[RMDB]
Source information:
An RNA of 207 nucleotides, treated with 2A3 and DMS and read out base by base. The DMS profile rests on 2,125 reads. For 2A3 the reverse transcriptase was SuperScript II with manganese. Source: RMDB library OK3TST, as collected in RNAgym. DMS adducts were read by reverse transcription with MarathonRT.
RNA sequence: GGGAACGACUCGAGUAGAGUCGAAAAGAUGGAUUUAAGUAUGUCGACGGAUCGGCAUCUAAAGGUGCAACCGAUAAUACUUCACUCAUCGAUUCAACAAAACUCAAAGCGUGUGUCUGAAUUGAUAACUCUAUUCAUCUGAAAUUGGAUAAGUAGGCGAGGAGAUGAGAUUCGUCUCAUCUCCUCGAAAAGAAACAACAACAACAAC
Reactivity to 2A3 in 0.01 (KOAc 150mM, MgCl2 10mM, bicine 150mM(pH8.5), 24C), signal-to-noise 3, nucleotides 027 to 156: g020a000u050g060g010a010u010u060u140a010a010g010u000a010u030g010u030c020g040a100c080g040g020a160u150c100g110g000c000a010u000c030u180a230a160a140g000g000u010g000c000a040a040c020c010g000a010u070a170a040u010a110c000u030u010c070a030c050u050c020a010u000c010g020a010u000u040c010a030a040c010a040a090a010a030c020u050c030a150a110a040g080c070g020u050g020u010g020u030c080u090g030a110a060u060u060g030a050u080a120a050c020u000c000u090a020u000u030c010a030u010c060u070g110a060a070a110u140u090g000g040a030u030a130a060g090u070a060g000g080
Reactivity to DMS in 0.01 (KOAc 150mM, MgCl2 10mM, bicine 150mM(pH8.5), 24C), signal-to-noise 1, nucleotides 027 to 156: g020a050u000g040g000a040u000u010u020a000a000g080u010a050u010g100u000c040g020a300c070g000g050a080u030c060g030g000c060a030u020c050u000a100a100a160g030g020u000g000c020a140a190c010c020g000a060u000a070a040u010a000c010u000u000c300a010c010u000c010a030u000c000g000a300u000u010c040a020a020c010a030a140a190a100c010u000c060a010a060a030g020c030g040u010g010u010g020u000c010u000g000a100a100u000u000g010a080u000a030a060c070u010c060u000a050u000u000c020a010u000c040u030g010a080a070a120u000u010g000g010a050u000a010a120g030u000a060g000g010